[RMDB]
RNA sequence: GGGAACGACUCGAGUAGAGUCGAAAAGAUAUGGAAGUAGAGCGAUGAAAGAAACUACCCACCUCGGAAACGAGAGGUUUCUGGAGCUCGCUUCCUAAGUCAAAACCCGUCCGUUCGCGGACGGGAAGGUGUACAAUUACUUCGGUAAUUGUACACCAAAAGAAACAACAACAACAAC
Reactivity to 2A3 in 0.01 (KOAc 150mM, MgCl2 10mM, bicine 150mM(pH8.5), 24C), signal-to-noise 2, nucleotides 027 to 126: g040a040u230a170u290g000g050a000a010g070u250a300g050a020g020c050g300a300u060g020a080a110a050g000a000a010a000c020u050a050c000c040c000a070c030c000u000c020g000g030a050a060a040c030g000a010g020a040g060g030u000u020u060c020u020g040g000a000g000c020u000c020g000c010u010u000c000c020u000a030a000g110u070c100a010a030a210a210c020c010c000g020u000c000c000g040u030u120c300g000c000g180g000a000c010g020g000g010a010a010
Reactivity to DMS in 0.01 (KOAc 150mM, MgCl2 10mM, bicine 150mM(pH8.5), 24C), signal-to-noise 2, nucleotides 027 to 126: g020a150u010a090u000g000g000a010a000g020u000a070g060a010g050c000g000a070u050g010a150a060a020g000a000a010a000c010u000a100c040c000c010a300c100c000u010c000g000g000a120a080a160c010g000a010g000a080g000g000u000u010u000c000u000g000g000a060g000c010u000c000g010c000u000u000c000c000u000a010a060g000u000c130a100a040a130a120c020c000c000g020u000c020c020g010u000u010c200g020c000g030g020a000c000g000g000g010a010a000

An RNA of 177 nucleotides, treated with 2A3 and DMS and read out base by base.
For DMS the reverse transcriptase was MarathonRT.
Values cover nucleotides 27 to 126.
The DMS profile rests on 1,374 reads.
The data come from the RNA Mapping Database (RMDB), library TTRDEL.
For 2A3, 2,583 sequencing reads were counted.